[RMDB]
RNA sequence: GGGAACGACUCGAGUAGAGUCGAAAAUUACUAGUCUGUGAUGAAUUGCUUUGACUUCUGUCACCUCGUAUGAAAACUGCACGUGCAGUCUGAUUAUUUAGCAAGACUGAGGCUUAAAAUAAAUCAACCUUAAUGCUAGGUUCGCCUAGCAUUAAGGAAAAGAAACAACAACAACAAC
Reactivity to 2A3 in 0.01 (KOAc 150mM, MgCl2 10mM, bicine 150mM(pH8.5), 24C), signal-to-noise 2, nucleotides 027 to 126: u060u030a070c020u010a010g030u000c050u050g200u050g060a060u020g030a030a180u050u030g020c020u070u060u120g050a080c020u040u010c050u250g030u020c000a030c010c020u060c040g020u050a020u060g040a010a060a080a080c020u030g000c010a020c180g140u140g000c000a020g010u010c020u000g010a010u000u070a010u080u190u100a040g000c020a060a000g020a020c010u020g030a020g050g000c040u090u090a070a110a040a080u160a050a130a050u110c060a030a080
Reactivity to DMS in 0.01 (KOAc 150mM, MgCl2 10mM, bicine 150mM(pH8.5), 24C), signal-to-noise 3, nucleotides 027 to 126: u000u010a090c110u000a040g010u000c020u000g020u000g000a150u000g000a080a120u010u000g010c040u010u000u010g000a040c050u010u020c070u000g010u000c020a100c130c080u010c130g000u000a040u000g000a180a060a090a050c040u000g000c010a160c300g010u000g010c000a000g010u010c050u000g000a130u000u000a050u000u010u000a050g010c040a070a060g010a070c040u010g040a040g020g010c050u000u000a040a020a060a060u000a020a080a070u000c110a070a160